[RMDB]
RNA sequence: GGGAACGACUCGAGUAGAGUCGAAAAGUGUUUGCGGGCGUGGCAUCAUCAAGAUUCACAUCCAUGCAUAUAUCACAAGACGCACAUAUACAUCCGAUUUGGCUGAGAAUCUUGAUGAUGCUGCAUCGGUAACGCUAUACUUCGGUAUAGCGUUACCAAAAGAAACAACAACAACAAC
Reactivity to 2A3 in 0.01 (KOAc 150mM, MgCl2 10mM, bicine 150mM(pH8.5), 24C), signal-to-noise 1, nucleotides 027 to 126: g040u020g000u140u100u070g070c110g070g030g010c000g010u020g000g000c000a000u000c000a010u000c010a020a010g000a000u010u010c000a000c010a060u000c000c010a010u040g020c070a030u060a020u040a010u120c070a010c040a240a110g140a000c080g020c140a040c040a100u200a050u030a060c060a050u080c020c050g040a050u000u010u140g010g010c030u040g000a030g000a060a020u040c050u020u020g010a000u010g020a000u000g000c010u000g000c000a000u000c050
Reactivity to DMS in 0.01 (KOAc 150mM, MgCl2 10mM, bicine 150mM(pH8.5), 24C), signal-to-noise 1, nucleotides 027 to 126: g000u000g000u000u000u000g010c140g000g020g000c180g010u000g000g080c010a000u000c000a000u000c020a020a030g010a000u000u000c000a100c030a020u000c010c020a020u000g040c190a180u010a050u000a040u000c120a140c130a180a080g000a110c210g000c100a140c160a020u020a070u010a020c110a060u010c020c090g010a080u010u000u000g000g020c180u000g000a130g000a010a000u000c000u000u000g000a020u000g020a010u000g000c000u010g000c010a020u020c010